[RMDB]
RNA sequence: GGGAACGACUCGAGUAGAGUCGAAAACAUAAGUUCCUUGGAACAGGACGUCAUAGAGGGUGAGAAUCCCGUCUUUGGCUGCUGGACCGCGCCCAUGCGAAGUUCCUUCGACGAGUCGAGUUGUUUGUAAAGGCUCAAAUUUCGAUUUGAGCCUUUAAAAAGAAACAACAACAACAAC
Reactivity to DMS in 0.01 (KOAc 150mM, MgCl2 10mM, bicine 150mM(pH8.5), 24C), signal-to-noise 3, nucleotides 027 to 126: c080a070u020a090a170g010u010u000c000c000u020u030g020g020a070a160c070a030g020g000a130c080g020u020c040a060u020a030g010a230g000g020g000u000g000a160g000a220a120u000c010c010c000g010u020c000u000u010u000g000g010c000u010g010c010u010g000g000a130c040c000g010c110g000c020c050c030a040u020g000c040g020a100a130g010u000u000c030c040u010u010c020g000a020c010g010a090g010u010c020g000a080g000u000u000g000u010u000u000g020
Reactivity to 2A3 in 0.01 (KOAc 150mM, MgCl2 10mM, bicine 150mM(pH8.5), 24C), signal-to-noise 1, nucleotides 027 to 126: c030a060u210a050a180g050u110u040c000c000u000u150g050g000a020a050c020a040g090g110a000c030g060u010c000a000u040a010g040a000g030g000g000u000g020a050g060a020a060u030c010c010c000g030u030c000u050u000u020g000g030c030u120g000c010u010g010g000a000c030c010g000c010g060c040c060c000a020u050g010c010g050a040a000g000u050u080c020c020u000u010c010g020a010c020g000a020g080u000c000g000a000g060u000u020g000u000u000u010g010

Chemical mapping of a 177-nucleotide RNA with DMS and 2A3.
2A3 adducts were read by reverse transcription with SuperScript II with manganese.
For DMS the reverse transcriptase was MarathonRT.
The 2A3 profile rests on 723 reads.